The record gives the reactivity of an RNA of 177 nucleotides to DMS and 2A3. DMS adducts were read by reverse transcription with MarathonRT. The RNA was probed in 150 mM KOAc, 10 mM MgCl2 and 150 mM bicine (pH 8.5) at 24 C. 2A3 adducts were read by reverse transcription with SuperScript II with manganese. In probing experiments dimethyl sulfate is read out at A N1 and C N3, which are open when not base-paired. The data come from the RNA Mapping Database (RMDB), library OK2TST.

RNA sequence: GGGAACGACUCGAGUAGAGUCGAAAAGGCAAACCUUGUAAGUUCAGUGACUUCUGGGAUGUCUCGUGCAACCGCGGUGUCUAAUAAUGCUUGUCAGAAGAUCCUCUCAAUAUUCAGGGCUUUGGCACUUGAACUACAGUUUCGACUGUAGUUCAAGAAAAGAAACAACAACAACAAC
Reactivity to DMS in 0.01 (KOAc 150mM, MgCl2 10mM, bicine 150mM(pH8.5), 24C), signal-to-noise 7, nucleotides 027 to 126: g010g010c020a030a090a160c020c010u010u000g010u010a030a070g010u000u000c160a120g010u010g010a050c020u000u000c000u000g000g010g010a270u000g000u000c010u000c090g030u000g020c110a070a120c110c050g010c080g010g010u000g000u000c040u010a080a070u000a080a090u000g000c070u000u000g010u000c030a060g000a060a050g010a060u000c030c010u000c090u000c090a060a090u000a180u000u010c070a060g010g000g010c090u010u000u000g000g010c070a160
Reactivity to 2A3 in 0.01 (KOAc 150mM, MgCl2 10mM, bicine 150mM(pH8.5), 24C), signal-to-noise 4, nucleotides 027 to 126: g040g000c010a000a060a130c010c000u030u050g070u210a050a070g000u080u070c170a070g020u050g230a020c010u010u010c010u020g030g000g040a040u040g040u000c020u010c040g080u070g030c030a030a070c030c020g000c020g010g050u030g020u000c050u050a050a090u110a160a050u240g060c040u070u090g080u130c020a010g020a070a020g010a200u050c010c010u030c020u010c010a060a100u070a140u200u090c030a040g000g050g000c030u000u060u060g030g000c030a030